[RMDB]
This 207-nucleotide RNA was probed chemically with 2A3 and DMS. It was measured as part of the RMDB library OK3TST. The RNA was probed in 150 mM KOAc, 10 mM MgCl2 and 150 mM bicine (pH 8.5) at 24 C.
RNA sequence: GGGAACGACUCGAGUAGAGUCGAAAACUCUGCUUCCUGAUCUGCCAGUACGUGAAGAAGUCACGCCACCAGCUCCCACCUCCACAGGGAUUUUAUCACAGCAACAGGAAGAGGAACUAACGCCAUUGAGGGUAUCAAGCUGACGGCAGAGCUUGAACAGCAUUAUACCUUUCGAGGUAUAAUGCUGAAAAGAAACAACAACAACAAC
Reactivity to 2A3 in 0.01 (KOAc 150mM, MgCl2 10mM, bicine 150mM(pH8.5), 24C), signal-to-noise 4, nucleotides 027 to 156: c030u050c010u060g040c000u030u010c000c020u040g060a140u040c030u020g000c020c000a070g020u110a070c050g030u060g020a050a080g110a110a030g200u030c020a010c060g020c030c030a060c030c030a020g020c020u020c010c010c000a070c030c050u080c030c040a070c030a100g020g010g000a030u050u110u050u110a160u110c030a040c020a080g030c020a030a050c000a030g000g030a010a000g000a020g030g000a020a010c050u100a080a010c070g050c000c010a050u040u150g060a070g000g010g020u090a060u110c010a000a020g000c000u060g020a050c080g020g000c010a010g010a000g040c000u030u050g020a080a060
Reactivity to DMS in 0.01 (KOAc 150mM, MgCl2 10mM, bicine 150mM(pH8.5), 24C), signal-to-noise 2, nucleotides 027 to 156: c090u000c000u000g020c000u000u010c010c020u020g020a200u000c040u000g000c000c040a300g020u010a060c050g020u030g020a080a300g020a100a100g020u000c020a080c060g000c030c000a110c030c070a080g000c080u010c000c000c000a250c080c060u020c040c020a180c070a090g010g000g000a070u010u000u000u000a150u000c050a110c070a150g000c050a040a070c030a060g030g030a050a030g000a080g010g000a040a070c040u020a090a120c070g010c030c040a160u000u010g000a110g030g010g030u000a100u010c010a000a030g020c030u000g000a050c040g020g000c020a050g000a050g000c020u000u010g000a090a300